[RMDB]
RNA sequence: GGGAACGACUCGAGUAGAGUCGAAAAGGCAUAUUAAGAUGGCUGUCCAAACAAGUGGAGAAGGUGACAGAUUUCUUGAAGGGAAUUGAUGAAGACGGUAUUCCGGAGAAUGAGAGAAUAAUAGGGCGUGAUAGGACAAUUUCGAUUGUCCUAUCACAAAAGAAACAACAACAACAAC
Reactivity to 2A3 in 0.01 (KOAc 150mM, MgCl2 10mM, bicine 150mM(pH8.5), 24C), signal-to-noise 3, nucleotides 027 to 126: g000g000c040a030u060a070u140u200a120a020g060a110u120g060g000c000u020g010u000c010c020a070a100a060c070a110a080g070u080g130g050a080g020a080a050g070g010u080g000a000c020a070g020a040u030u100u020c040u050u110g070a070a030g040g030g030a050a040u060u080g030a080u090g020a060a010g020a000c030g000g000u040a050u080u030c030c000g000g030a050g030a000a040u140g010a030g000a010g030a080a040u090a110a040u050a050g070g050g020c070
Reactivity to DMS in 0.01 (KOAc 150mM, MgCl2 10mM, bicine 150mM(pH8.5), 24C), signal-to-noise 4, nucleotides 027 to 126: g010g000c030a030u010a190u000u010a080a090g010a080u000g010g000c030u000g000u010c030c060a080a090a080c140a080a110g010u000g010g010a080g020a090a060g010g020u000g000a040c070a080g010a100u000u000u000c010u000u000g010a130a100g020g000g000a030a050u000u010g000a090u000g010a050a080g010a080c120g020g000u000a090u000u000c040c050g010g000a100g000a040a050u000g000a070g010a050g010a050a060u010a040a060u000a090g000g010g010c190